[RMDB]
Description
This 207-nucleotide RNA was probed chemically with DMS and 2A3. Values cover nucleotides 27 to 156. For DMS, 2,390 sequencing reads were counted.
RNA sequence: GGGAACGACUCGAGUAGAGUCGAAAACUUUUCGUAUUUCGAAACCCGCCAGGCCCGGAAGGGAGCAACGGUAGAAUUUACUUCGACGCUCAAGGGGUAGCGGGGCUGAGUACUAAUUAAGGCAAAAUGAGAUUUGGUGCUUUUGUCCACCCCAAGGCAUACCCUAACAGUUCGCUGUUAGGGUAUGAAAAGAAACAACAACAACAAC
Reactivity to DMS in 0.01 (KOAc 150mM, MgCl2 10mM, bicine 150mM(pH8.5), 24C), signal-to-noise 1, nucleotides 027 to 156: c040u000u000u000u000c050g020u010a110u000u010u000c000g010a090a160a170c200c020c010g060c010c060a300g000g000c020c000c040g080g050a120a210g010g040g030a060g020c020a080a100c010g030g000u000a180g020a150a090u000u010u000a050c070u000u000c040g000a070c070g000c020u010c040a120a120g000g040g000g000u000a040g000c150g000g020g040g020c000u000g010a070g000u000a050c000u000a040a090u000u000a090a160g010g040c080a110a080a070a130u020g020a150g000a100u010u010u020g060g020u000g020c030u000u000u010u000g050u000c000c010a080c040c000c020c010a050a100g010g010
Reactivity to 2A3 in 0.01 (KOAc 150mM, MgCl2 10mM, bicine 150mM(pH8.5), 24C), signal-to-noise 3, nucleotides 027 to 156: c020u080u050u110u100c060g020u100a190u060u140u050c010g010a040a050a040c030c000c000g000c010c000a010g000g040c020c000c020g040g120a090a080g090g010g000a000g010c020a010a010c000g010g020u020a040g050a050a090u160u150u050a060c040u040u050c020g050a030c030g000c030u060c030a100a160g000g020g010g000u020a030g110c080g040g020g000g000c000u000g000a010g000u010a000c010u010a000a060u140u080a080a050g180g000c100a070a060a050a180u190g030a120g030a160u040u080u080g030g000u020g000c000u070u020u130u130g010u000c000c010a000c000c000c000c000a020a000g060g010
The RNA was probed in 150 mM KOAc, 10 mM MgCl2 and 150 mM bicine (pH 8.5) at 24 C. The data come from the RNA Mapping Database (RMDB), library ARCHII. The 2A3 profile rests on 2,133 reads.